[RMDB]
RNA sequence: GGGAACGACUCGAGUAGAGUCGAAAAACAUAGUGGCUACGGCCACUAUGAAUACAGCGGGGGAGACAUAUAUCACAGCCUGUCUCGUGCCCGACCCCGCUGGAGCUCCUCCUUACGAGGAGGAGCAACUGUGCAUUGAAUUCGUUCAAUGCACAGUAAAAGAAACAACAACAACAAC
Reactivity to 2A3 in 0.01 (KOAc 150mM, MgCl2 10mM, bicine 150mM(pH8.5), 24C), signal-to-noise 9, nucleotides 027 to 126: a000c000a000u000a000g000u000g010g000c010u030a070c280g100g000c010c000a000c000u000a000u000g000a000a000u180a030c000a000g000c000g000g000g000g020g000a010g010a000c030a010u160a020u080a030u260c110a070c050a150g100c020c040u020g000u000c000u010c010g070u130g070c000c000c000g020a070c000c000c000c000g000c000u000g010g000a020g000c000u000c000c000u020c010c000u060u040a060c270g090a010g000g000a000g000g000a000g000c000a000
Reactivity to DMS in 0.01 (KOAc 150mM, MgCl2 10mM, bicine 150mM(pH8.5), 24C), signal-to-noise 7, nucleotides 027 to 126: a150c020a010u000a000g010u000g010g010c000u000a070c220g030g000c000c000a020c000u000a000u000g000a160a080u040a090c030a010g000c010g000g000g010g010g000a020g010a010c010a030u020a080u020a120u040c240a100c230a130g010c200c130u010g000u000c010u000c020g020u040g000c010c000c000g010a300c010c000c010c000g020c000u000g000g010a100g000c000u000c000c000u000c000c000u000u010a150c160g010a040g000g000a010g010g000a010g010c000a000